[RMDB]
RNA sequence: GGGAACGACUCGAGUAGAGUCGAAAAUGUUUUCAAAAAUGUGCGACUAAUCGAAAAUCUAAAACCAUUUGAUGAAGGGGAUAAUGACUUAUGAAAACGACUAAAUCCGUCAUUACAAUUUUAUUACACAUCUGGGAGAUUUCGAUCUCCCAGAUGUAAAAGAAACAACAACAACAAC
Reactivity to 2A3 in 0.01 (KOAc 150mM, MgCl2 10mM, bicine 150mM(pH8.5), 24C), signal-to-noise 2, nucleotides 027 to 126: u020g000u000u000u020u000c010a000a110a000a000a020u170g030u120g010c070g010a020c120u160a130a050u040c010g050a070a020a030a070u070c060u120a000a010a120a110c010c010a090u060u050u140g070a060u020g000a060a070g000g000g060g110a000u010a020a050u070g030a000c020u020u050a030u120g030a040a010a000a040c030g090a020c120u100a100a070a070u000c020c000g010u010c000a000u020u000a000c030a000a040u020u060u140u210a200u090u200a080c060
Reactivity to DMS in 0.01 (KOAc 150mM, MgCl2 10mM, bicine 150mM(pH8.5), 24C), signal-to-noise 1, nucleotides 027 to 126: u000g010u000u000u000u000c000a070a000a060a070a040u000g060u000g000c040g000a060c140u000a130a020u000c070g000a050a090a130a110u040c040u000a080a050a050a110c040c110a020u000u050u000g000a040u010g010a020a040g000g000g000g010a020u000a000a000u000g000a000c020u050u040a120u000g000a040a020a050a040c250g020a060c230u010a050a040a050u000c010c060g000u010c000a010u000u000a020c050a040a040u000u000u010u030a120u020u000a090c070
Source: RMDB library RFM100, as collected in RNAgym. This 177-nucleotide RNA was probed chemically with 2A3 and DMS. For DMS the reverse transcriptase was MarathonRT. For 2A3 the reverse transcriptase was SuperScript II with manganese. Values cover nucleotides 27 to 126. The RNA was probed in 150 mM KOAc, 10 mM MgCl2 and 150 mM bicine (pH 8.5) at 24 C. The 2A3 profile rests on 860 reads.